This 177-nucleotide RNA was probed chemically with 2A3 and DMS. For DMS the reverse transcriptase was MarathonRT. Values cover nucleotides 27 to 126.

RNA sequence: GGGAACGACUCGAGUAGAGUCGAAAACAAAAGAAACAUCCCAAAGUAUUAAUAUUAAUGGGUGUACCGGGUAGCUAUUUAGUAGCAACUGAUAAAUCAUAUAUUGGUGAUUUAGUUAAAAUAGCAGGACCUACUACUUUUUCGAAAGUAGUAGGUCAAAAGAAACAACAACAACAAC
Reactivity to 2A3 in 0.01 (KOAc 150mM, MgCl2 10mM, bicine 150mM(pH8.5), 24C), signal-to-noise 1, nucleotides 027 to 126: c000a010a100a000a030g130a000a180a000c020a030u160c000c010c000a050a070a020g050u070a090u300u140a220a230u100a060u300u110a100a090u060g000g000g000u020g000u020a000c030c030g010g020g170u060a060g000c000u000a020u060u160u020a040g060u020a040g150c040a020a010c000u020g050a050u070a080a040a020u000c010a000u080a030u080a140u210u100g120g010u020g030a020u000u000u020a000g020u040u080a100a070a070a100u080a020g000c000a000g150
Reactivity to DMS in 0.01 (KOAc 150mM, MgCl2 10mM, bicine 150mM(pH8.5), 24C), signal-to-noise 1, nucleotides 027 to 126: c020a030a070a150a160g000a160a140a040c010a040u040c020c000c040a020a160a170g000u000a100u000u000a120a100u010a070u000u020a050a190u000g010g000g010u000g020u000a130c140c060g020g000g000u010a150g000c010u000a000u000u000u000a050g020u000a080g020c150a040a010c030u000g000a030u000a040a030a010u000c010a030u000a110u000a230u000u020g010g040u000g000a150u020u000u000a020g000u000u000a050a080a000a010u010a040g000c050a150g010